[RMDB]
RNA sequence: GGGAACGACUCGAGUAGAGUCGAAAAGAGGCUCACUGUUCCCUGGCCGUUGUUCUCAAUGCUUCACGUAUUUUGACUUACUUAAUCCUCAUGUCAAAUCUGUGUGGCAAGGGUCAGGUGAGGAGCUUGUGCUCAGGUCCUGGGAGCCAAGUCUGAGCCCCUUAGGUAGAUUCGUCUACCUAAGGGGAAAAGAAACAACAACAACAAC
Reactivity to 2A3 in 0.01 (KOAc 150mM, MgCl2 10mM, bicine 150mM(pH8.5), 24C), signal-to-noise 2, nucleotides 027 to 156: g120a020g000g040c010u020c060a120c090u110g150u210u090c030c010c000u000g030g010c020c050g170u130u150g050u120u030c110u060c130a170a230u170g000c010u060u040c010a010c010g040u070a060u050u110u060u100g010a030c020u070u130a040c000u080u190a170a150u300c040c070u120c120a130u200g010u020c000a000a000a020u000c050u070g020u000g000u020g010g000c000a020a000g020g030g000u000c020a010g020g020u110g050a070g000g110a010g000c010u050u040g080u100g010c000u020c020a020g000g060u040c070c010u010g060g050g010a020g020c030c040a010a000g030u000c070u090g030a100g020
Reactivity to DMS in 0.01 (KOAc 150mM, MgCl2 10mM, bicine 150mM(pH8.5), 24C), signal-to-noise 1, nucleotides 027 to 156: g020a130g020g020c010u010c020a160c010u000g020u010u000c040c000c010u000g050g040c010c010g030u020u000g030u010u000c080u000c060a170a260u000g000c050u010u010c030a020c100g010u010a100u000u010u000u030g020a090c000u000u060a080c080u000u000a060a170u000c130c100u010c110a150u010g000u000c010a040a060a020u010c220u000g000u010g000u000g010g000c030a030a090g000g000g020u000c030a020g020g000u010g010a050g000g000a060g020c010u000u010g030u000g010c000u010c020a020g000g010u000c030c000u000g010g030g020a080g020c020c010a020a040g010u000c030u000g030a260g000